[RMDB]
An RNA of 177 nucleotides, treated with DMS and read out base by base. For DMS, 781 sequencing reads were counted. The data come from the RNA Mapping Database (RMDB), library OK2TST. Values are in units of 0.01, from 0 to 300, in steps of 10. DMS adducts were read by reverse transcription with MarathonRT.

RNA sequence: GGGAACGACUCGAGUAGAGUCGAAAAACGUCGUUGAUCCGCUCGACUUCGGUCACGCCUUUCGGAAACGACACGGGCGUCUGCCAGAACGGCUCGCCCGUCUGCAGGUUCAGCGCGACGAGGCCGAAUAGGGGCCUAGUUUCGACUAGGCCCCUAUAAAAGAAACAACAACAACAAC
Reactivity to DMS in 0.01 (KOAc 150mM, MgCl2 10mM, bicine 150mM(pH8.5), 24C), signal-to-noise 1, nucleotides 027 to 126: a080c070g010u000c020g020u000u000g000a050u010c010c020g030c120u000c100g020a020c070u000u000c020g030g040u000c030a060c090g010c010c060u010u010u000c080g050g010a090a040a040c000g050a150c220a020c030g010g000g000c000g020u000c230u000g020c050c000a190g000a130a300c120g000g000c000u000c040g010c040c000c000g000u000c050u000g050c140a130g000g020u010u010c050a080g000c000g020c060g010a030c050g010a060g000g010c010c030g030a020